[RMDB]
RNA sequence: GGGAACGACUCGAGUAGAGUCGAAAAGAUAUGGACUAACCUUGUAAGACGAAUCAUACUACCCACCGAGGAUUCUCGGAAACGAGAAUUUCGAGGUAUGACUAUCUUACAAGGUUAGUCCUAAGUCCUCAAACGUAAGGUUCGCCUUACGUUUGAGAAAAGAAACAACAACAACAAC
Reactivity to DMS in 0.01 (KOAc 150mM, MgCl2 10mM, bicine 150mM(pH8.5), 24C), signal-to-noise 1, nucleotides 027 to 126: g000a130u010a300u000g020g000a030c000u000a020a000c000c000u000u010g010u000a010a000g000a060c120g020a080a180u000c000a010u000a020c070u000a150c020c050c160a300c150c020g000a020g000g020a000u000u000c000u010c000g000g000a010a000a110c010g010a020g000a010a000u010u000u010c000g000a170g000g000u000a000u050g030a020c050u000a300u000c010u010u000a000c000a000a010g010g000u010u010a020g000u000c000c010u010a000a090g000u010c050